[RMDB]
RNA sequence: GGGAACGACUCGAGUAGAGUCGAAAAGAUUGGUGAUCAGACGAACAUCGCCACCGCCGGGUGCCCAGGUGUCGUAUACGCCACCAAAGAACAUGGCCUUGAAGACCAGGAGCAAACAGCCAACGCCCUAUGUUCCUUUUUUCGAAAAGGAACAUAGAAAAGAAACAACAACAACAAC
Reactivity to 2A3 in 0.01 (KOAc 150mM, MgCl2 10mM, bicine 150mM(pH8.5), 24C), signal-to-noise 9, nucleotides 027 to 126: g120a060u080u100g010g010u030g020a050u070c070a040g090a170c060g040a110a050c020a060u030c020g010c020c010a020c010c010g040c020c010g030g000g000u050g010c010c020c010a020g010g020u020g010u010c010g010u050a070u030a110c050g010c010c010a010c020c010a070a070a030g040a050a030c040a100u090g020g000c000c010u060u100g060a090a010g030a050c020c020a020g020g030a030g020c040a040a050a050c010a020g010c000c000a020a010c030g040c010c000
Reactivity to DMS in 0.01 (KOAc 150mM, MgCl2 10mM, bicine 150mM(pH8.5), 24C), signal-to-noise 9, nucleotides 027 to 126: g000a140u030u010g010g020u000g010a060u010c070a120g020a090c140g010a080a110c140a060u000c040g010c050c020a050c070c040g000c040c060g000g000g020u000g010c040c020c040a120g010g010u010g000u000c050g020u010a080u010a120c110g000c180c000a030c040c040a050a070a090g020a080a070c100a070u010g000g020c020c020u010u020g010a070a070g010a070c070c030a060g000g010a080g000c060a050a080a070c080a080g000c010c010a050a080c070g000c030c050